[RMDB]
RNA sequence: GGGAACGACUCGAGUAGAGUCGAAAAAGAAAGGCUAAGCACCUCGCAAUGAGGUAAGGUGGGACUUUUCCUUCUGAAACCAAGCGGUUGGUUCCGAGGGGGGUGUGAUCCAGGUACCGCCGUAGAAACUGGAUUACGACGUCUACCCGGAAUUCAAGAAAUGUACGUAGUUCGCUACGUACAUUUCAAAAGAAACAACAACAACAAC
Reactivity to DMS in 0.01 (KOAc 150mM, MgCl2 10mM, bicine 150mM(pH8.5), 24C), signal-to-noise 2, nucleotides 027 to 156: a030g000a070a030a010g050g030c010u000a010a090g010c060a090c000c050u010c080g010c110a200a160u010g010a090g000g010u000a010a030g040g050u010g010g050g010a080c070u000u000u010u010c010c020u000u020c060u000g000a110a060a110c010c010a070a210g000c130g020g020u000u010g010g010u000u010c000c000g000a100g010g020g030g040g020g050u000g010u010g020a040u000c010c040a030g000g000u010a110c100c010g000c090c140g000u030a060g000a060a080a230c030u000g010g010a120u010u010a060c000g000a100c050g040u000c010u000a090c030c010c000g010g010a100a130u020u000c020a020a300
Reactivity to 2A3 in 0.01 (KOAc 150mM, MgCl2 10mM, bicine 150mM(pH8.5), 24C), signal-to-noise 3, nucleotides 027 to 156: a000g030a000a000a010g020g000c020u030a020a010g010c010a010c000c010u060c070g060c160a170a230u220g010a050g030g040u020a030a040g030g000u030g000g010g040a070c060u080u030u050u030c000c000u080u090c050u080g100a050a040a010c020c010a080a010g100c050g100g030u010u030g020g000u020u010c020c020g010a270g000g000g000g000g000g000u050g010u010g010a010u000c010c000a000g010g010u060a060c020c050g060c030c030g020u000a030g110a030a150a010c010u000g000g010a000u000u030a010c130g010a010c030g180u080c030u090a290c020c000c040g030g020a060a070u160u150c060a090a030
Record summary: Source: RMDB library VIROID, as collected in RNAgym. The record gives the reactivity of an RNA of 207 nucleotides to DMS and 2A3. For DMS, 3,548 sequencing reads were counted. For 2A3, 2,449 sequencing reads were counted. In probing experiments dimethyl sulfate is read out at A N1 and C N3, which are open when not base-paired. Reactivities are given for positions 27 through 156.